This 207-nucleotide RNA was probed chemically with 2A3.
[RMDB]
RNA sequence: GGGAACGACUCGAGUAGAGUCGAAAAGGGGCUGACAGGAGUCGACAGUAGAGUGUAUCAUGUCAGUAAGCAUGCCGGGGAAUGGUGGUUUACCCCGUUAUCAAAUGAUUACCGACCAAUAAUUGGCUUAGCUCGUUGGGCUUCGGCCCAACGAGAACUCUACGAACUGGUUCGCCAGUUCGUAGAGAAAAGAAACAACAACAACAAC
Reactivity to 2A3 in 0.01 (KOAc 150mM, MgCl2 10mM, bicine 150mM(pH8.5), 24C), signal-to-noise 2, nucleotides 027 to 156: g010g020g000g000c030u000g010a040c020a050g010g070a040g030u070c050g060a020c030a040g110u140a040g020a060g090u090g030u080a070u100c030a030u050g020u020c020a030g040u070a050a000g030c030a020u080g060c050c010g000g000g000g010a030a030u060g020g020u020g000g020u030u020u090a050c000c000c000c000g050u020u040a010u040c020a010a030a050u050g040a020u090u050a020c000c010g040a050c040c020a040a030u180a180a030u110u100g020g000c030u100u100a030g040c000u010c000g000u000u000g010g020g010c010u020u020c100g070g000c000c000c000a000a000c000g000a000g010a000a000
For 2A3, 1,571 sequencing reads were counted. The reactions ran in a buffer of 150 mM KOAc, 10 mM MgCl2 and 150 mM bicine (pH 8.5), at 24 C.